[RMDB]
This 307-nucleotide RNA was probed chemically with DMS.
For DMS, 5,160 sequencing reads were counted.
Values cover nucleotides 27 to 266.
Conditions: 150 mM KOAc, 10 mM MgCl2 and 150 mM bicine (pH 8.5), 24 C.
The data come from the RNA Mapping Database (RMDB), library POS240.
RNA sequence: GGGAACGACUCGAGUAGAGUCGAAAAGAAGUACUCAUGAUCGAAAAGAUCAUGAGUACAAAAAAUGUAUUAGGCUAUACAUAUAACUGUUACUGUUAUUAGCUUAUAACAACAGGAGGACAUAUGAAAGUGUGAGCCACCGCGCCCGGCCUAUGUUUUUCUUUAGAGACAGCCUUUGAGUUGGUGAUAAGCUUAUGCACUGAAGAUGCCUUGACCAGCAAAACCUGUGUCAUGAGAGGCAGAGUCCCACUUUUCUGUAUAUUAUGCGCAGCUUGUUCGCAAGCUGCAAAAGAAACAACAACAACAAC
Reactivity to DMS in 0.01 (KOAc 150mM, MgCl2 10mM, bicine 150mM(pH8.5), 24C), signal-to-noise 1, nucleotides 027 to 266: g000a200a140g010u000a000c000u010c000a020u000g000a000u000c000g030a160a170a130a200g000a000u010c010a030u000g010a000g000u020a020c010a000a000a120a110a140a040u000g000u000a040u000u000a030g000g000c020u000a090u000a030c020a080u020a070u020a050a060c070u020g050u020u050a090c150u010g000u000u000a010u010u000a090g000c020u000u000a030u000a050a030c020a070a030c070a070g000g000a080g040g010a030c030a090u010a000u000g000a160a030a060g000u000g020u000g000a050g000c000c040a060c040c060g000c060g000c110c200c140g000g000c050c080u000a020u000g000u000u010u000u000u010c020u000u010u000a030g020a110g010a040c090a070g000c080c070u010u000u030g020a120g000u010u010g000g010u010g000a100u000a060a100g000c040u000u020a100u020g010c000a050c020u000g020a080a070g010a120u020g010c010c020u000u010g000a000c000c030a010g030c100a020a060a120a210c300c010u000g000u050g020u020c000a120u040g000a110g000a110g000g000c000a030g000a220g010u000c010c000c100a180c100u000u000u020u010c110u000g000u000a060u030a130u000u010a080u050g010c300